[RMDB]
This 207-nucleotide RNA was probed chemically with 2A3. The reactions ran in a buffer of 150 mM KOAc, 10 mM MgCl2 and 150 mM bicine (pH 8.5), at 24 C. Reactivities are given for positions 27 through 156.

RNA sequence: GGGAACGACUCGAGUAGAGUCGAAAAGAAGCCAUUACAGAAGACAGGUGUAGGGCAACCCAUAUAAAUAUGGCGUUCCCAUACUUCCCUCAAUUCCCACGUUUCCAUGUAAUGGGCCGAUAUCAUCAGUGCCGGGUAAAAUGUGGAUGUCGGAAGCGCUGAAUGGUUCAUUCGUGAACCAUUCAGCAAAAGAAACAACAACAACAAC
Reactivity to 2A3 in 0.01 (KOAc 150mM, MgCl2 10mM, bicine 150mM(pH8.5), 24C), signal-to-noise 1, nucleotides 027 to 156: g070a130a010g060c040c000a010u030u030a020c020a040g100a130a020g060a180c100a050g050g000u080g010u120a020g040g030g050c030a010a020c040c020c040a030u050a000u000a040a150a020u140a000u010g000g000c090g020u000u000c000c010c000a010u050a020c010u090u030c010c000c000u080c020a010a070u060u010c000c000c000a000c010g020u000u050u010c060c000a080u040g000u070a080a040u020g000g000g070c020c000g000a020u080a000u050c030a020u010c000a060g010u010g300c070c020g030g000g000u140a100a180a000a040u150g060u090g100g010a010u000g000u000c000g000g020a010a050g000c020